[RMDB]
RNA sequence: GGGAACGACUCGAGUAGAGUCGAAAAAAAAGCAAGAAAAGGUGUUUGACUAGUAAUCUCAUUGCCCCUCGUUCUUCUACACUUCAGCUUGUCUUGGCUUGGGAUCUUCUGUAGAGCAUACAGAUUCAAAAACAACCUAUUUCGAUAGGUUGUUUUUAAAAGAAACAACAACAACAAC
Reactivity to 2A3 in 0.01 (KOAc 150mM, MgCl2 10mM, bicine 150mM(pH8.5), 24C), signal-to-noise 2, nucleotides 027 to 126: a000a000a000a000g000c000a020a010g060a050a100a010a020g100g010u020g040u060u150u090g060a020c030u040a050g070u080a080a200u060c020u000c070a170u080u190g030c000c000c000c000u000c010g010u020u000c000u060u010c020u040a050c060a020c040u050u050c010a000g030c000u030u050g030u090c020u030u060g030g040c000u030u020g020g020g040a040u010c020u100u010c000u040g020u020a010g000a010g150c040a010u020a030c010a000g040a130u030u120c060
Reactivity to DMS in 0.01 (KOAc 150mM, MgCl2 10mM, bicine 150mM(pH8.5), 24C), signal-to-noise 7, nucleotides 027 to 126: a070a050a040a040g010c030a050a040g000a050a070a080a050g010g010u000g010u000u010u000g010a080c080u000a070g010u000a070a050u000c040u000c070a110u000u000g000c030c010c020c030u000c040g010u010u000c020u000u000c060u000a080c120a050c070u010u010c090a070g010c030u010u010g010u000c040u000u000g010g010c040u000u000g000g000g010a070u000c080u000u000c020u000g010u000a020g010a120g000c130a090u000a020c040a020g000a100u010u010c130
Chemical mapping of a 177-nucleotide RNA with 2A3 and DMS. Values cover nucleotides 27 to 126. DMS adducts were read by reverse transcription with MarathonRT. 2A3 adducts were read by reverse transcription with SuperScript II with manganese. For DMS, 11,948 sequencing reads were counted. Values are in units of 0.01, from 0 to 300, in steps of 10. The data come from the RNA Mapping Database (RMDB), library OK2TRN.